[RMDB]
The record gives the reactivity of an RNA of 207 nucleotides to 2A3 and DMS.
RNA sequence: GGGAACGACUCGAGUAGAGUCGAAAAUAAUGACCUCGGGUAUGGUAACAACGUCAAAGAUGCAACAAUGGGCUAUCCGCAGCCAAGUCCUCGCCGCUUCGCAGCGGUUGGAUGCUGUUCACAGACUAGAUGGUGGUGGGUUCUCGGAUGCGUCCCGCAUACCAAUAUCGUUCGCGAUAUUGGUAUGAAAAGAAACAACAACAACAAC
Reactivity to 2A3 in 0.01 (KOAc 150mM, MgCl2 10mM, bicine 150mM(pH8.5), 24C), signal-to-noise 4, nucleotides 027 to 156: u130a000a100u090g060a040c020c000u020c050g010g000g010u080a070u070g030g030u050a110a070c050a040a020c040g040u050c080a050a070a040g100a050u100g030c030a050a040c040a090a130u070g050g010g000c000u040a050u060c010c020g000c020a000g020c020c030a040a010g030u000c010c010u060c140g000c020c000g030c030u140u130c100g020c050a010g000c000g030g000u000u030g020g010a020u050g010c020u020g020u040u050c050a040c010a090g040a060c030u050a040g010a140u080g030g030u020g000g020u040g010g020g010u040u000c020u010c020g030g000a010u030g040c010g030u040c010c000c000g000
Reactivity to DMS in 0.01 (KOAc 150mM, MgCl2 10mM, bicine 150mM(pH8.5), 24C), signal-to-noise 3, nucleotides 027 to 156: u000a110a100u010g020a110c040c010u000c040g020g010g020u000a050u000g010g020u000a050a110c050a090a080c040g000u000c030a060a120a110g000a110u000g010c060a060a030c040a070a130u000g030g020g030c050u000a070u000c010c050g000c030a050g000c010c110a050a100g000u010c050c020u000c070g000c000c000g000c010u000u000c250g020c210a090g040c010g020g030u000u000g020g020a090u000g020c040u000g000u010u000c050a110c060a090g020a080c040u000a070g020a090u000g010g000u000g000g020u010g030g010g010u000u000c010u000c020g020g010a060u000g010c040g010u010c010c000c010g000
It was measured as part of the RMDB library RSTRND. The RNA was probed in 150 mM KOAc, 10 mM MgCl2 and 150 mM bicine (pH 8.5) at 24 C. For DMS the reverse transcriptase was MarathonRT.